[RMDB]
RNA sequence: GGGAACGACUCGAGUAGAGUCGAAAACUUGUGCGGGACCACUGUCCCCAUUCACCUAAAUGCUACUCAGUCUGAUAUGGACGUCGCGCACGGCAAAAGAUGGGAUAUUGAGCUCCCAUCAUACACUUCUAAAUUGUCGGGAACGACCUGGAAGGGACUACACUAUGAUGUUCGCAUCAUAGUGUAGAAAAGAAACAACAACAACAAC
Reactivity to DMS in 0.01 (KOAc 150mM, MgCl2 10mM, bicine 150mM(pH8.5), 24C), signal-to-noise 3, nucleotides 027 to 156: c050u010u000g040u010g040c040g010g000g050a040c010c120a120c150u000g020u000c030c010c000c020a040u000u000c050a050c070c090u000a030a050a130u010g000c020u010a050c010u030c000a140g020u000c020u000g010a200u000a070u000g010g030a110c040g020u000c020g030c050g000c030a060c020g010g020c040a090a070a140a200g010a010u000g020g010g020a090u010a300u000u010g000a200g060c110u000c000c000c000a050u000c030a070u000a080c050a040c060u000u000c020u000a050a070a120u010u010g020u000c020g010g010g020a150a150c010g000a060c020c130u010g000g020a070a060g000g000g000a240
Reactivity to 2A3 in 0.01 (KOAc 150mM, MgCl2 10mM, bicine 150mM(pH8.5), 24C), signal-to-noise 8, nucleotides 027 to 156: c030u110u140g020u030g010c130g010g010g010a000c040c050a180c300u270g020u020c010c000c000c010a030u060u070c050a090c020c030u090a100a110a050u130g010c010u010a040c010u010c050a020g060u020c030u050g110a150u120a120u300g060g020a010c010g010u020c020g010c000g010c040a030c030g030g000c020a030a040a050a050g010a010u000g010g000g000a020u030a100u130u240g050a050g040c020u000c000c020c010a000u000c000a000u030a010c080a000c020u100u100c030u140a090a150a150u100u050g010u010c010g000g000g040a070a070c020g010a020c000c020u040g020g020a030a020g040g010g010a020

Annotation
An RNA of 207 nucleotides, treated with DMS and 2A3 and read out base by base. For DMS the reverse transcriptase was MarathonRT. The DMS profile rests on 5,555 reads. Conditions: 150 mM KOAc, 10 mM MgCl2 and 150 mM bicine (pH 8.5), 24 C.